[RMDB]
RNA sequence: GGGAACGACUCGAGUAGAGUCGAAAAAGUGUCCCCAGUUAUGGACCUGUAACUGCCACUUGUGGAGGUAUCAUAGACAUAUGAUACACAGCUUCAUAUGUCUAUGAGGCUGUGUGCCUCCAGGAGUAUAGGUCCAUACUCCAGUGGCAGGGACACACGAUGCUUGUAUGUUCGCAUACAAGCAUCGAAAAGAAACAACAACAACAAC
Reactivity to 2A3 in 0.01 (KOAc 150mM, MgCl2 10mM, bicine 150mM(pH8.5), 24C), signal-to-noise 5, nucleotides 027 to 156: a000g010u010g010u010c000c000c000c000a070g000u110u060a010u020g010g020a010c010c000u080g040u110a230a220c040u250g170c040c020a140c100u170u220g080u110g130g010a020g010g010u050a050u170c000a010u000a010g050a050c010a060u030a010u000g020a010u090a070c120a030c030a120g070c020u010u000c010a000u020a020u080g090u080c020u020a010u000g000a000g010g000c050u100g060u070g030u090g140c000c000u020c000c010a010g000g020a000g010u010a020u020a050g030g000u000c000c000a000u000a000c000u030c010c040a080g050u120g110g010c060a040g010g020g000a010c000a000c000a000
Reactivity to DMS in 0.01 (KOAc 150mM, MgCl2 10mM, bicine 150mM(pH8.5), 24C), signal-to-noise 1, nucleotides 027 to 156: a090g040u000g010u010c000c110c040c070a020g010u000u000a000u000g000g000a040c020c000u000g000u000a060a090c090u020g040c000c070a100c060u000u010g000u000g000g020a070g070g010u000a110u000c000a030u000a020g000a130c170a120u000a000u010g000a060u010a200c020a110c150a100g000c090u010u000c000a020u000a030u080g010u000c120u000a050u010g010a010g040g010c050u000g010u000g000u000g020c020c000u020c010c040a100g000g010a030g010u000a030u000a030g020g020u010c020c030a090u000a000c020u030c050c050a160g020u000g030g000c050a080g000g020g020a050c020a010c000a190
Structure probing data (2A3 and DMS) for a 207-nucleotide construct. DMS adducts were read by reverse transcription with MarathonRT. For 2A3 the reverse transcriptase was SuperScript II with manganese. The reactions ran in a buffer of 150 mM KOAc, 10 mM MgCl2 and 150 mM bicine (pH 8.5), at 24 C.